Chemical mapping of a 207-nucleotide RNA with DMS and 2A3. Source: RMDB library OK3TST, as collected in RNAgym. 2A3 adducts were read by reverse transcription with SuperScript II with manganese. For 2A3, 987 sequencing reads were counted.
RNA sequence: GGGAACGACUCGAGUAGAGUCGAAAAAGAAAAAAAGAAGUGGAUAAGCAGUAUGAAGAUGAUGUCAUUGCUAUAAAAAAUAACGUCAACCUUUCUAAGUCUGAAAAAGAUAAAUUGUUAGCUAUUGCUGAUCAAAGACAUAAGGAUGAAGUAAGAAUGCAUACUACUGAUUCGUCAGUAGUAUGCAAAAAGAAACAACAACAACAAC
Reactivity to DMS in 0.01 (KOAc 150mM, MgCl2 10mM, bicine 150mM(pH8.5), 24C), signal-to-noise 1, nucleotides 027 to 156: a140g080a020a000a060a080a060a060a060g000a110a120g000u000g010g000a060u000a060a060g000c040a100g000u010a110u020g010a060a030g010a090u000g000a040u010g000u010c000a080u000u000g010c010u000a120u000a010a020a100a020a110a010u010a040a020c030g010u000c010a070a030c040c000u000u000u000c070u010a050a110g020u000c030u030g010a080a050a100a070a040g040a060u020a070a060a200u000u000g010u000u000a060g090c000u000a110u000u030g000c020u000g060a050u010c060a010a040a070g000a090c050a050u000a060a090g000g030a120u000g010a050a090g000u000a000a080g020a060a100
Reactivity to 2A3 in 0.01 (KOAc 150mM, MgCl2 10mM, bicine 150mM(pH8.5), 24C), signal-to-noise 1, nucleotides 027 to 156: a000g000a000a000a000a050a000a000a070g090a100a010g030u070g110g040a030u060a070a020g000c070a040g070u150a080u160g050a060a040g030a060u060g010a000u040g040u020c020a000u040u060g000c000u000a010u290a070a090a020a000a000a050u080a040a000c000g020u010c060a030a030c010c000u030u180u080c040u180a140a030g060u040c000u010g060a000a190a000a000a080g040a040u060a010a080a060u080u020g030u030u080a000g000c010u060a020u230u240g000c000u030g000a040u060c020a000a100a000g020a000c030a050u090a020a020g040g000a030u020g050a070a020g050u090a070a050g070a030a000